RNA sequence: GGGAACGACUCGAGUAGAGUCGAAAAGAUAUGGAAAGUCGAGCCGAGUACCCAGUCGGAAACGACUGGUACGUUUGACGCAGUGAAAGACUUUCCUAAGUCAAAUCUGAGUCUUCGGACUCAGAAACUAUACAAGGUCGUUCGCGACCUUGUAUAGAAAAGAAACAACAACAACAAC
Reactivity to DMS in 0.01 (KOAc 150mM, MgCl2 10mM, bicine 150mM(pH8.5), 24C), signal-to-noise 3, nucleotides 027 to 126: g010a030u000a300u020g000g000a010a000a020g010u000c000g000a150g000c040c030g020a090g000u000a000c150c050c040a020g000u000c000g010g020a080a080a140c000g000a000c000u010g020g010u000a000c010g000u000u020u010g000a190c300g010c070a150g030u020g000a110a120a220g000a020c000u000u000u010c000c010u010a030a110g000u000c020a040a090a150u000c000u000g000a020g000u000c000u000u000c260g020g010a000c000u010c000a010g000a010a070a130
Reactivity to 2A3 in 0.01 (KOAc 150mM, MgCl2 10mM, bicine 150mM(pH8.5), 24C), signal-to-noise 2, nucleotides 027 to 126: g030a010u040a030u100g000g000a030a000a020g000u010c010g000a040g100c120c040g080a050g000u010a020c060c000c090a000g010u010c020g000g000a060a020a050c000g010a010c000u000g050g010u000a000c010g000u030u190u300g050a060c070g010c080a040g110u190g300a160a110a110g000a010c000u010u000u000c000c010u010a070a020g050u000c000a040a000a230u000c000u000g020a000g010u000c010u030u120c300g140g000a010c000u010c000a010g000a000a000a020
Background: Source: RMDB library TTRDEL, as collected in RNAgym. An RNA of 177 nucleotides, treated with DMS and 2A3 and read out base by base. Reactivities are given for positions 27 through 126. 2A3 adducts were read by reverse transcription with SuperScript II with manganese. The reactions ran in a buffer of 150 mM KOAc, 10 mM MgCl2 and 150 mM bicine (pH 8.5), at 24 C.